Structure probing data (2A3 and DMS) for a 177-nucleotide construct. DMS (dimethyl sulfate) methylates the pairing face of unpaired adenines and cytosines. 2A3 adducts were read by reverse transcription with SuperScript II with manganese. For 2A3, 5,016 sequencing reads were counted. Values cover nucleotides 27 to 126. Conditions: 150 mM KOAc, 10 mM MgCl2 and 150 mM bicine (pH 8.5), 24 C.
[RMDB]
RNA sequence: GGGAACGACUCGAGUAGAGUCGAAAAGAUAUGGAUCUGCAUGGUGGAGCUGCUCGGAAACGAGACAGCUAUGAAGCCAUGGAUCCUAAGUCAAACUGCUACACUAGGUUCGCCUAGUGUAGCAGAAGCUUAUGGAAAUCUUCGGAUUUCCAUAAGCAAAAGAAACAACAACAACAAC
Reactivity to 2A3 in 0.01 (KOAc 150mM, MgCl2 10mM, bicine 150mM(pH8.5), 24C), signal-to-noise 3, nucleotides 027 to 126: g020a000u090a040u150g000g000a010u020c040u140g260c070a010u010g000g040u010g010g020a020g000c010u000g020c000u010c010g040g020a050a090a070c020g010a010g110a100c010a010g000c010u140a300u080g010a000a000g010c000c020a000u010g000g000a000u020c000c000u010a110a000g090u040c040a010a100a060c020u000g000c000u000a000c000a000c000u000a010g050g040u040u060c270g150c050c000u010a000g000u000g000u010a000g000c000a010g000a000a000
Reactivity to DMS in 0.01 (KOAc 150mM, MgCl2 10mM, bicine 150mM(pH8.5), 24C), signal-to-noise 3, nucleotides 027 to 126: g010a040u000a300u010g000g000a010u000c000u000g030c000a000u000g000g010u000g020g010a020g010c000u000g010c000u000c000g000g010a090a120a170c000g000a010g000a100c000a010g040c010u010a040u020g010a170a290g000c000c000a010u000g000g010a000u000c000c000u000a030a110g000u000c020a060a170a250c010u000g010c000u000a010c010a010c010u000a000g010g000u020u020c220g010c010c000u000a000g000u000g010u000a000g000c000a000g010a030a030